[RMDB]
RNA sequence: GGGAACGACUCGAGUAGAGUCGAAAAGGUGUCGUAGUAUAAGUCAUAAAAGGUGCUAAUAUGAUUUUAAUCGAUUAUAAAUAAAGCACAAGCCUGGACGUGUGAACUAGGCAAAUCGACGCAAGAAGACUAGUCAGUCAUUCGUGACUGACUAGUCAAAAGAAACAACAACAACAAC
Reactivity to DMS in 0.01 (KOAc 150mM, MgCl2 10mM, bicine 150mM(pH8.5), 24C), signal-to-noise 2, nucleotides 027 to 126: g020g030u000g000u000c040g000u000a080g010u000a090u060a060a260g010u080c020a070u040a090a060a130a120g010g000u000g050c000u000a050a110u000a000u030g000a000u000u000u000u000a120a070u070c110g000a010u020u000a000u020a020a010a110u090a000a110a020g000c000a040c000a120a120g000c010c010u000g010g000a050c060g000u010g000u000g010a110a120c000u000a030g000g000c000a030a030a090u030c000g020a020c000g000c040a170a100g000a180a110
Reactivity to 2A3 in 0.01 (KOAc 150mM, MgCl2 10mM, bicine 150mM(pH8.5), 24C), signal-to-noise 1, nucleotides 027 to 126: g010g000u000g000u000c000g030u030a020g000u000a000u000a300a030g100u040c000a000u150a050a060a000a000g250g000u000g000c000u000a020a070u050a040u130g000a000u000u040u000u000a030a000u030c020g030a020u050u000a080u040a050a160a070u240a060a070a000g000c000a000c040a040a000g000c000c000u010g000g000a020c010g130u150g000u000g040a060a060c010u000a000g000g000c000a000a000a070u010c000g000a000c000g010c020a010a010g120a000a020
This 177-nucleotide RNA was probed chemically with DMS and 2A3.